[RMDB]
Chemical mapping of a 177-nucleotide RNA with 2A3. Values are in units of 0.01, from 0 to 300, in steps of 10. The 2A3 profile rests on 774 reads. The reactions ran in a buffer of 150 mM KOAc, 10 mM MgCl2 and 150 mM bicine (pH 8.5), at 24 C. For 2A3 the reverse transcriptase was SuperScript II with manganese.

RNA sequence: GGGAACGACUCGAGUAGAGUCGAAAAGAGGUCCCCACUGUCCCUAGCUAGAACUUAGUGAACCUGCUAUUCUGGUGCACAAGCCAGAGUCUUCCAUUGGGAAGCGAAGACCCCGUAGAGUUUUACUCCACUAGCUCAUGUUCGCAUGAGCUAGUGGAAAAGAAACAACAACAACAAC
Reactivity to 2A3 in 0.01 (KOAc 150mM, MgCl2 10mM, bicine 150mM(pH8.5), 24C), signal-to-noise 2, nucleotides 027 to 126: g080a020g050g090u000c000c030c000c000a030c010u050g030u050c040c030c000u030a070g010c020u030a010g070a160a070c110u060u090a030g000u040g100a040a080c000c060u040g020c000u010a090u110u010c000u030g090g000u060g000c110a110c080a130a000g000c010c000a010g000a000g020u020c020u010u000c000c000a160u100u190g240g070g020a050a030g000c000g040a020a010g110a060c070c000c000c000g070u080a040g020a030g060u010u020u000u030a030c020u040